[RMDB]
RNA sequence: GGGAACGACUCGAGUAGAGUCGAAAACAGAUCACGUUCGCGUGAUCUGGAAAGAUUUCUCGUAGAGCCACGAGAAGUAAAUUAAUGAAAGCUCACUGAGAACCACCCGCGGGUUCGCCCGCGGGAAAGAAGGAGAAAGAUUCGUCUUUCUCCUUCUAAAAGAAACAACAACAACAAC
Reactivity to DMS in 0.01 (KOAc 150mM, MgCl2 10mM, bicine 150mM(pH8.5), 24C), signal-to-noise 3, nucleotides 027 to 126: c010a000g000a010u010c000a000c010g030u000u010c210g030c000g030u000g000a000u000c000u010g000g010a080a090a120g010a110u010u000u000c000u000c000g010u000a160g010a050g010c030c130a060c010g010a010g000a020a010g000u000a040a030a050u000u000a040a040u010g010a100a060a100g010c000u000c010a160c190u010g000a110g010a130a110c170c170a130c000c000c000g030c000g010g000g010u000u010c220g010c000c000c000g000c000g000g000g000a000a010
Reactivity to 2A3 in 0.01 (KOAc 150mM, MgCl2 10mM, bicine 150mM(pH8.5), 24C), signal-to-noise 2, nucleotides 027 to 126: c000a000g000a000u000c000a000c000g030u080u080c230g010c000g100u000g000a000u010c000u000g000g030a010a060a010g040a060u020u020u000c010u000c010g030u030a070g000a040g080c050c180a010c010g020a020g020a060a010g060u130a040a140a150u150u110a030a080u090g100a160a020a010g000c000u010c060a030c070u080g050a070g020a120a050c020c010a010c010c000c000g000c000g000g060g010u050u070c160g070c000c000c000g020c000g000g020g000a020a010

An RNA of 177 nucleotides, treated with DMS and 2A3 and read out base by base.
For DMS the reverse transcriptase was MarathonRT.
Conditions: 150 mM KOAc, 10 mM MgCl2 and 150 mM bicine (pH 8.5), 24 C.
The DMS profile rests on 3,215 reads.
It was measured as part of the RMDB library M2PK50.